[RMDB]
RNA sequence: GGGAACGACUCGAGUAGAGUCGAAAAUUUCUCCUAUUCGUAGGAGAAAGAAGGACCACCCGGGAGGGUUAAGGCCAUACGGACACCCGGGUCCACUGCCGAUAAGGGCUGAGUUCGCUCAGCCCAAACAUGUUGCACAUUUCGAUGUGCAACAUGUAAAAGAAACAACAACAACAAC
Reactivity to DMS in 0.01 (KOAc 150mM, MgCl2 10mM, bicine 150mM(pH8.5), 24C), signal-to-noise 2, nucleotides 027 to 126: u000u000u000c000u000c000c000u000a040u010u020c110g000u000a010g010g000a030g000a000a010a010g000a160a150g020g000a150c130c090a060c050c000c010g020g000g010a170g020g020g000u000u000a020a120g000g010c020c110a130u000a110c140g000g010a060c090a080c030c040c010g010g000g000u000c040c000a110c060u000g000c050c040g020a100u010a060a110g000g000g000c010u000g010a030g030u000u000c270g000c000u000c010a010g010c000c000c010a020a040
Reactivity to 2A3 in 0.01 (KOAc 150mM, MgCl2 10mM, bicine 150mM(pH8.5), 24C), signal-to-noise 1, nucleotides 027 to 126: u010u000u010c010u000c000c000u060a060u070u070c290g090u030a000g010g000a020g000a010a000a000g020a010a050g020g030a080c010c010a000c000c040c000g060g000g010a100g060g110g000u060u100a070a090g070g000c000c040a070u130a210c220g030g070a030c000a090c020c030c000g000g000g000u010c000c000a060c060u200g070c060c020g040a050u070a200a210g000g000g000c000u010g010a000g020u040u110c220g030c080u000c000a000g000c000c000c000a000a010
Conditions: 150 mM KOAc, 10 mM MgCl2 and 150 mM bicine (pH 8.5), 24 C. Structure probing data (DMS and 2A3) for a 177-nucleotide construct. For 2A3 the reverse transcriptase was SuperScript II with manganese. DMS adducts were read by reverse transcription with MarathonRT.